[RMDB]
RNA sequence: GGGAACGACUCGAGUAGAGUCGAAAACGGUAUUGGUCAAGGCUAUACCGAGAGCGCACCUUCAAAAGGGCGCUUAAUCCCCGGCCAAGCGCCGAAAUAUGAAUAGACACCGCUGGGCUGGUAGGGCAAAACAUGGCGAUCUUCGGAUCGCCAUGAACUAUUCUUUUUCCUUCGGGAAAAAGAAUAGAAAAGAAACAACAACAACAAC
Reactivity to 2A3 in 0.01 (KOAc 150mM, MgCl2 10mM, bicine 150mM(pH8.5), 24C), signal-to-noise 2, nucleotides 027 to 156: c020g000g010u020a030u090u200g050g010u050c020a080a100g070g010c000u020a010u000a010c000c000g020a030g000a000g020c020g000c030a300c060c020u060u140c060a050a060a050a020g000g010g000c000g000c000u000u010a000a010u000c020c010c000c000g000g010c010c020a080a030g020c060g000c070c040g090a050a080a000u230a070u090g050a070a050u040a090g080a050c030a020c030c020g000c010u020g020g040g000c020u010g000g090u090a040g020g000g010c030a020a000a060a060c000a020u010g000g000c000g000a000u000c000u040u040c200g060g010a000u030c010g000c010c000a000u000g000a000a000
Reactivity to DMS in 0.01 (KOAc 150mM, MgCl2 10mM, bicine 150mM(pH8.5), 24C), signal-to-noise 2, nucleotides 027 to 156: c030g020g010u000a020u000u010g130g030u010c040a110a140g050g000c030u000a050u000a070c030c010g020a290g010a040g020c020g020c030a100c020c000u030u000c210a130a190a200a100g000g020g010c000g000c000u000u000a010a070u010c000c010c010c030g000g000c000c040a080a100g020c060g000c020c040g010a020a060a120u010a170u010g030a180a220u000a160g000a150c100a000c090c040g030c020u010g020g000g000c020u000g060g020u000a040g060g020g040c090a070a090a150a190c000a010u000g020g020c000g030a010u000c000u000u020c260g030g010a010u000c010g000c000c010a000u000g010a050a100